[RMDB]
RNA sequence: GGGAACGACUCGAGUAGAGUCGAAAAGCUUUUGUCUCAUAAUAUGAACAGCAUCAUUAAGCGUUGCAUCUGCCUGUAUCGUGAUUGGUUUAAUCAUUACACCUUCUACAGUCUUGUCAUUGGGACGUGGAUCUUUAGACUUCGGUCUAAAGAUCCAAAAAGAAACAACAACAACAAC
Reactivity to DMS in 0.01 (KOAc 150mM, MgCl2 10mM, bicine 150mM(pH8.5), 24C), signal-to-noise 2, nucleotides 027 to 126: g020c030u010u010u010u010g010u000c070u000c020a060u000a100a070u020a240u010g000a060a090c060a080g010c040a050u010c030a050u010u010a080a120g000c090g010u000u010g000c020a050u000c040u000g000c070c030u010g000u010a020u010c090g030u000g020a060u010u000g000g020u000u010u010a070a060u010c070a040u010u000a080c090a060c020c040u000u000c060u010a030c090a100g010u000c020u000u000g010u000c110a100u030u000g020g010g010a040c040g030
Reactivity to 2A3 in 0.01 (KOAc 150mM, MgCl2 10mM, bicine 150mM(pH8.5), 24C), signal-to-noise 1, nucleotides 027 to 126: g010c010u160u020u040u110g060u050c000u000c010a070u050a250a000u140a030u190g040a020a010c010a040g020c000a030u040c030a050u090u150a110a000g050c010g070u060u010g040c020a020u020c040u040g010c010c000u070g040u010a060u080c050g050u010g020a060u050u020g000g080u030u080u180a040a040u040c010a000u020u090a050c010a040c060c030u090u020c030u050a050c040a020g010u000c010u080u070g020u000c040a060u040u110g040g020g010a000c060g050

Notes: The record gives the reactivity of an RNA of 177 nucleotides to DMS and 2A3. For 2A3, 922 sequencing reads were counted. The DMS profile rests on 1,705 reads. Source: RMDB library OK2TRN, as collected in RNAgym.